[RMDB]
RNA sequence: GGGAACGACUCGAGUAGAGUCGAAAAGACUGGCAAGGCAGGAGUUGGUAAGAGCACGGUGAUGCAAAGAUUGGUGACGGAAAUACUUGAAGAACAUCUGCAAGACCCGAUAGCUGAUAGAUACUCACGGAAUGCAAUUGAUUGCUAUUGGAGUGGGCAUCCGCCCAACGUUCGCGUUGGGCGGAUGAAAAGAAACAACAACAACAAC
Reactivity to 2A3 in 0.01 (KOAc 150mM, MgCl2 10mM, bicine 150mM(pH8.5), 24C), signal-to-noise 3, nucleotides 027 to 156: g030a020c080u080g020g030c030a040a060g030g010c010a010g040g060a020g020u090u080g010g030u060a080a040g070a010g000c090a040c070g030g020u040g000a040u060g000c040a000a050a090g030a030u080u120g010g000u050g010a000c030g070g010a060a080a000u150a100c060u050u090g010a010a040g060a140a030c010a070u090c010u030g010c020a060a000g180a100c230c000c050g040a070u110a060g030c020u020g010a020u060a100g060a010u090a090c010u010c040a000c010g000g090a080a050u070g020c020a060a060u050u220g080a150u100u110g020c000u110a120u050u100g030g060a090g010u080g000g020g000
Reactivity to DMS in 0.01 (KOAc 150mM, MgCl2 10mM, bicine 150mM(pH8.5), 24C), signal-to-noise 1, nucleotides 027 to 156: g010a100c000u010g000g060c000a040a090g030g010c040a060g030g000a100g000u030u000g000g010u000a090a120g000a120g040c060a100c040g030g020u000g020a240u030g000c000a100a060a110g030a180u010u010g000g040u010g000a190c030g030g010a100a020a190u000a040c050u000u000g010a070a060g010a080a100c090a100u030c100u000g010c080a040a050g000a080c080c000c000g000a190u000a170g040c030u090g010a110u010a120g030a160u000a030c030u000c040a100c040g000g010a080a100u000g040c050a040a150u030u000g000a120u020u000g020c010u000a200u000u000g010g020a180g040u000g000g010g010
Background:
This 207-nucleotide RNA was probed chemically with 2A3 and DMS. For DMS the reverse transcriptase was MarathonRT. The DMS profile rests on 1,703 reads. The 2A3 profile rests on 1,165 reads.